[RMDB]
RNA sequence: GGGAACGACUCGAGUAGAGUCGAAAAUACCAAACAGCAGCGGAGUUUUAAACUUUAAAUAGACAGGUCUGAGUGCCUGAACUUGCCUUUUCAUUUUACUUCAUCCUCCAAGGAGUUCAAUCACUUGGUGCUUUUUGGUAUUCGUACCAAAAAGCACAAAAGAAACAACAACAACAAC
Reactivity to 2A3 in 0.01 (KOAc 150mM, MgCl2 10mM, bicine 150mM(pH8.5), 24C), signal-to-noise 2, nucleotides 027 to 126: u180a060c040c000a070a030a070c090a010g090c020a000g030c050g070g030a080g040u050u060u020u250a030a080a040c010u050u080u130a030a090a140u080a000g070a010c010a060g000g030u090c010u220g140a100g140u210g040c000c000u000g000a000a010c000u010u020g040c000c000u170u080u000u010c020a170u010u000u010u100a050c030u000u050c000a080u080c000c030u020c000c030a000a000g040g000a000g010u020u040c130a130a170u030c030a140c130u000u000g150